Description:
The data come from the RNA Mapping Database (RMDB), library M2PK50. Structure probing data (2A3 and DMS) for a 177-nucleotide construct. Reactivities are given for positions 27 through 126. For 2A3 the reverse transcriptase was SuperScript II with manganese. DMS adducts were read by reverse transcription with MarathonRT. Conditions: 150 mM KOAc, 10 mM MgCl2 and 150 mM bicine (pH 8.5), 24 C.
RNA sequence: GGGAACGACUCGAGUAGAGUCGAAAAGCAUUCCACUUCGGUGGAAUGCAAAUGCCGGCUGCAAGAUAAGUGCUUCAAAGAGUGGGAGCACUGCCGAAGAAAAAAGUUCCAUGUUCGCAUGGAACAAGCGAUAAUAUCAGUUCGCUGAUAUUAUCGCAAAAGAAACAACAACAACAAC
Reactivity to 2A3 in 0.01 (KOAc 150mM, MgCl2 10mM, bicine 150mM(pH8.5), 24C), signal-to-noise 6, nucleotides 027 to 126: g010c010a010u010u020c000c000a000c000u030u040c150g100g000u010g010g010a000a000u000g000c010a000a010a030u080g010c010c010g010g020c030u070g010c040a050a030g020a150u170a220a060g020u010g010c000u020u000c030a080a160a090g150a120g100u150g030g000g000a010g010c000a000c000u000g000c000c010g050a100a120g070a060a120a020a010a000a000g000u010u000c000c000a000u010g060u010u030c230g000c070a000u000g000g000a000a000c000a000a010
Reactivity to DMS in 0.01 (KOAc 150mM, MgCl2 10mM, bicine 150mM(pH8.5), 24C), signal-to-noise 3, nucleotides 027 to 126: g010c000a020u000u000c010c010a000c000u000u010c190g010g050u000g010g000a000a000u000g020c000a000a040a050u000g000c050c010g010g000c020u010g010c130a110a140g000a150u000a060a090g000u000g000c000u010u000c010a110a130a170g020a190g020u010g020g000g000a010g000c010a010c000u000g020c010c050g020a110a120g010a000a070a060a060a090a080g000u000u000c000c000a010u000g000u000u000c200g020c000a010u010g010g010a010a000c010a030a080